[RMDB]
RNA sequence: GGGAACGACUCGAGUAGAGUCGAAAAUAUGGGCAGUUCGCUGCCCAUACGAGCGGAGUCCGGCACUAUGAGCCCGCACCGUUGGUGCGUAGCCGCGGUGCAGAGACCAAGCCUUCGGGCUUGGUAAUUCGUUUAUUACCUUCGGGUAAUAAACGAAAAAAGAAACAACAACAACAAC
Reactivity to 2A3 in 0.01 (KOAc 150mM, MgCl2 10mM, bicine 150mM(pH8.5), 24C), signal-to-noise 2, nucleotides 027 to 126: u050a000u010g020g000g000c000a000g020u040u080c170g080c140u000g010c000c000c000a000u000a000c000g010a030g070c050g040g040a050g060u040c030c000g020g020c020a010c010u150a120u170g060a010g050c020c000c010g000c000a010c000c000g100u110u300g020g000u090g020c120g150u150a010g000c000c000g000c030g000g010u010g000c010a030g000a000g010a050c000c000a000a000g000c000c000u020u020c150g040g010g000c000u000u000g000g000u010a010a060
Reactivity to DMS in 0.01 (KOAc 150mM, MgCl2 10mM, bicine 150mM(pH8.5), 24C), signal-to-noise 4, nucleotides 027 to 126: u000a000u000g000g010g020c000a000g010u010u020c210g020c000u000g000c010c000c000a000u000a000c060g010a100g010c060g010g010a130g010u000c030c030g010g010c030a040c060u000a090u010g010a140g000c020c040c030g020c010a000c000c000g000u000u010g090g020u000g010c300g000u000a200g010c000c000g000c050g000g000u000g010c000a090g000a120g010a040c010c000a010a000g000c000c000u000u000c190g040g010g000c010u000u000g000g010u000a010a020
Chemical mapping of a 177-nucleotide RNA with 2A3 and DMS.
DMS (dimethyl sulfate) methylates the pairing face of unpaired adenines and cytosines.